[RMDB]
RNA sequence: GGGAACGACUCGAGUAGAGUCGAAAACUAUCCGUCUUCGGACGGAUAGAAAGAAUAAAAGAGCCAAUAAUACGGGUAAAAGCCUCAAAAUACCCGAAUAAAAAACAAAGCAGUUCGCUGCUUUGAACGAACUAAGUAUGUUCGCAUACUUAGUUCGAAAAGAAACAACAACAACAAC
Reactivity to 2A3 in 0.01 (KOAc 150mM, MgCl2 10mM, bicine 150mM(pH8.5), 24C), signal-to-noise 2, nucleotides 027 to 126: c000u000a010u020c000c000g020u010c000u050u020c100g190g010a010c010g020g000a000u010a000g000a010a000a010g030a030a090u220a090a090a030a020g090a000g070c010c040a030a000u140a110a020u100a040c020g010g020g010u030a010a090a070a160g040c000c050u100c060a110a090a000a050u030a010c000c000c060g010a010a030u070a040a060a010a010a000a000c010a000a000a000g000c010a000g030u080u100c230g040c110u000g000c000u000u010u000g000a020a010
Reactivity to DMS in 0.01 (KOAc 150mM, MgCl2 10mM, bicine 150mM(pH8.5), 24C), signal-to-noise 2, nucleotides 027 to 126: c010u000a000u000c010c000g000u000c000u000u030c250g020g000a020c000g000g000a000u010a000g000a050a130a060g000a130a080u020a020a090a100a150g000a110g000c140c070a050a070u000a150a110u020a100c060g000g000g020u000a010a130a070a100g000c010c060u030c080a060a080a090a120u000a030c010c010c000g060a120a060u010a010a040a100a070a060a110c000a000a000a000g010c000a020g010u000u010c280g010c000u000g010c000u000u000u000g010a050a100
Conditions: 150 mM KOAc, 10 mM MgCl2 and 150 mM bicine (pH 8.5), 24 C. The record gives the reactivity of an RNA of 177 nucleotides to 2A3 and DMS. For 2A3, 2,170 sequencing reads were counted. The data come from the RNA Mapping Database (RMDB), library M2PK50.